The record gives the reactivity of an RNA of 207 nucleotides to DMS and 2A3.
[RMDB]
RNA sequence: GGGAACGACUCGAGUAGAGUCGAAAAUUGCUGGGGACACAGUAGGGAACAAAGCAGGCAAAUGUUCUGUCUUUAGGAGUUUGCAUUCUCAUGGAGGCAUCAGAAAUGAACAAACAAGUCAGAUGCUCGUGUGUUAGACAGCGAGGAGCGCUAAGGACACAUCUAGCGUAUUCGUACGCUAGAUGUGAAAAGAAACAACAACAACAAC
Reactivity to DMS in 0.01 (KOAc 150mM, MgCl2 10mM, bicine 150mM(pH8.5), 24C), signal-to-noise 2, nucleotides 027 to 156: u000u010g010c010u010g020g010g040g020a110c110a090c090a110g000u010a110g010g000g000a080a100c060a090a080a110g040c090a060g020g090c020a050a070a100u020g020u000u010c020u000g010u000c020u000u000u010a110g010g000a040g000u030u000u000g040c090a080u000u020c010u000c020a080u000g000g010a090g050g020c030a050u000c040a120g020a080a050a130u000g020a040a110c010a050a060a040c090a050a100g010u010c020a120g020a140u010g000c000u000c040g020u010g000u030g020u000u030a100g020a170c020a100g000c080g010a080g010g010a110g000c030g070c060u020a090a140g000g010a250
Reactivity to 2A3 in 0.01 (KOAc 150mM, MgCl2 10mM, bicine 150mM(pH8.5), 24C), signal-to-noise 3, nucleotides 027 to 156: u100u060g010c030u040g000g000g030g010a000c020a000c010a100g100u130a040g010g030g000a030a040c020a030a090a010g020c030a020g010g000c020a060a120a180u180g020u060u050c000u010g170u050c040u060u110u070a050g020g010a020g010u050u080u030g040c050a040u130u040c010u010c030a020u050g050g030a040g000g040c000a010u010c010a030g120a040a150a030u110g040a060a020c020a050a100a020c040a130a020g080u040c010a010g000a080u020g000c000u000c030g090u070g010u000g010u010u030a100g010a090c020a010g010c010g050a030g000g030a010g000c040g000c070u070a040a050g090g010a010

Record summary: For DMS the reverse transcriptase was MarathonRT.